[RMDB]
RNA sequence: GGGAACGACUCGAGUAGAGUCGAAAAACGCCGGGCUCCAGCCUGAGGAGCUGCUGUUUCACCUGGUCCUGGUUCAUAGACCCAUGAGUAUAGGGGAAACCAGGAUGAAGCGCAAGCCAAACCAUCCGAUUUAUGCUGUUUUCGAACAGCAUAAAUCAAAAGAAACAACAACAACAAC
Reactivity to DMS in 0.01 (KOAc 150mM, MgCl2 10mM, bicine 150mM(pH8.5), 24C), signal-to-noise 4, nucleotides 027 to 126: a110c220g020c050c060g010g020g010c010u010c080c150a160g000c030c060u010g000a090g000g000a080g010c030u000g030c020u010g030u000u000u000c000a050c010c000u000g010g000u000c000c010u000g010g000u010u000c100a040u000a170g010a160c120c090c080a090u000g000a080g010u020a090u000a120g000g000g000g020a090a180a050c000c000a010g000g000a060u000g000a020a040g010c010g000c030a070a070g010c040c050a020a100a120c050c030a200u010c100c080
Reactivity to 2A3 in 0.01 (KOAc 150mM, MgCl2 10mM, bicine 150mM(pH8.5), 24C), signal-to-noise 2, nucleotides 027 to 126: a000c060g010c030c030g020g000g010c030u090c120c050a040g010c030c050u050g070a060g040g020a040g020c000u000g020c060u090g000u000u000u030c010a000c010c010u000g020g020u020c000c010u020g030g000u000u000c030a030u050a160g100a240c030c000c040a030u050g020a020g080u120a080u190a300g000g040g000g020a080a100a030c010c010a000g000g010a040u010g010a030a000g000c000g000c030a070a000g030c030c040a020a030a040c020c010a040u050c000c050